[RMDB]
RNA sequence: GGGAACGACUCGAGUAGAGUCGAAAACUGGGUAGCCUCGAGGUCGCGCACCUGCAGCCACAGCGCGCCGGGAAAAGGUCCCCGCGAAUGGUCCGGCUCGCCGUAACCGGCCAGUUCGAGCAGUGACCGUUACGUCGAAUUUCGAUUCGACGUAACGAAAAGAAACAACAACAACAAC
Reactivity to 2A3 in 0.01 (KOAc 150mM, MgCl2 10mM, bicine 150mM(pH8.5), 24C), signal-to-noise 1, nucleotides 027 to 126: c030u020g000g000g090u080a060g030c000c010u070c090g030a080g060g040u240c030g010c000g000c040a050c050c020u080g040c040a020g060c000c040a090c070a040g010c010g000c010g000c030c000g020g000g000a130a180a010a010g070g030u080c020c000c010c010g030c020g000a030a040u070g000g070u170c030c030g000g030c030u040c070g130c040c070g000u000a020a040c030c020g000g000c000c000a010g030u070u040c030g040a040g000c070a030g000u030g180a030c100
Reactivity to DMS in 0.01 (KOAc 150mM, MgCl2 10mM, bicine 150mM(pH8.5), 24C), signal-to-noise 2, nucleotides 027 to 126: c050u000g010g010g020u010a070g020c060c020u000c050g000a220g010g030u010c030g030c030g000c020a110c130c060u010g010c080a080g000c000c000a120c140a110g000c030g010c020g000c050c030g000g030g020a060a040a120a050g000g000u000c080c000c000c080g000c030g000a030a030u000g020g000u010c010c010g010g000c020u000c080g030c080c120g020u020a110a090c100c010g010g010c000c020a080g010u000u000c020g020a120g040c120a090g020u000g010a080c060